[RMDB]
RNA sequence: GGGAACGACUCGAGUAGAGUCGAAAAUCAGAGGAAGCUCUUCAGUCAGUCUCGACUCUUCGAUCAGAGAGAGCUUCGAGACUCUGAUCGAGAGAAGAGAGAGCUAGCUAGUCCUUCUCGACUAGAGGACUCUGACUCUCUAGGACUCUAGGAAGGAAGGAUAUUAUUCAUUCGUGAAUAAUAUCCUAAAAGAAACAACAACAACAAC
Reactivity to 2A3 in 0.01 (KOAc 150mM, MgCl2 10mM, bicine 150mM(pH8.5), 24C), signal-to-noise 6, nucleotides 027 to 156: u090c010a010g030a030g060g080a110a010g020c020u020c020u150u100c090a080g090u040c020a020g060u010c030u010c020g040a030c010u000c040u260u210c030g030a050u040c030a000g020a010g020a010g000a020g100c090u210u110c060g020a020g010a010c010u000c000u010g000a010u010c010g000a000g000a000g010a070a010g020a000g000a010g000a010g010c010u030a020g050c020u060a020g050u000c020c000u060u030c070u060c050g080a060c020u020a010g010a010g040g010a040c020u010c020u100g030a070c000u010c000u000c010u060a030g020g050a090c020u030c040u130a040g070g030a030a010g030g020a010
Reactivity to DMS in 0.01 (KOAc 150mM, MgCl2 10mM, bicine 150mM(pH8.5), 24C), signal-to-noise 3, nucleotides 027 to 156: u000c050a030g010a060g010g000a160a130g000c000u000c020u000u000c050a090g020u000c050a090g010u000c040u020c020g010a230c010u000c000u010u010c020g010a160u040c100a080g000a110g010a110g000a140g000c110u010u010c100g000a090g010a140c010u010c010u010g010a010u000c010g020a030g020a040g020a080a190g000a110g010a060g010a040g030c020u000a070g010c070u000a090g000u000c000c010u010u000c070u000c040g020a190c070u000a020g010a050g000g020a050c010u010c040u010g000a080c050u000c000u000c010u000a080g000g000a120c010u000c010u000a100g030g010a100a110g010g030a180